[RMDB]
RNA sequence: GGGAACGACUCGAGUAGAGUCGAAAAAGGACUGACUUCGAGACUUCCUUCUCAGAGGACUCUUCUCUCGAUCAGUCGAUCAGCUAGCUCUCUCUGAGAGACUGAGAGAUCUCUCCUGAGAUCUCUCCUGACUCUCUCUAGUCAGCUUCGACUAGGAGCCCAGUGGAAAAUUCGUUUUCCACUGGGCAAAAGAAACAACAACAACAAC
Reactivity to 2A3 in 0.01 (KOAc 150mM, MgCl2 10mM, bicine 150mM(pH8.5), 24C), signal-to-noise 1, nucleotides 027 to 156: a000g130g000a000c000u000g010a010c010u040u000c060g010a030g030a060c000u040u020c030c000u100u000c160u050c060a180g020a030g110g000a050c050u050c100u300u020c010u030c000u040c040g020a030u040c010a020g030u010c020g020a060u050c020a010g090c080u090a000g000c010u010c010u010c010u000c110u160g000a000g000a000g000a010c020u060g000a000g000a000g000a040u010c030u000c010u040c050c170u160g000a000g000a000u000c010u000c000u090c030c050u080g020a040c000u020c010u000c010u000c000u020a000g010u000c010a000g040c010u060u150c050g080a010c050u140a080g160g030a010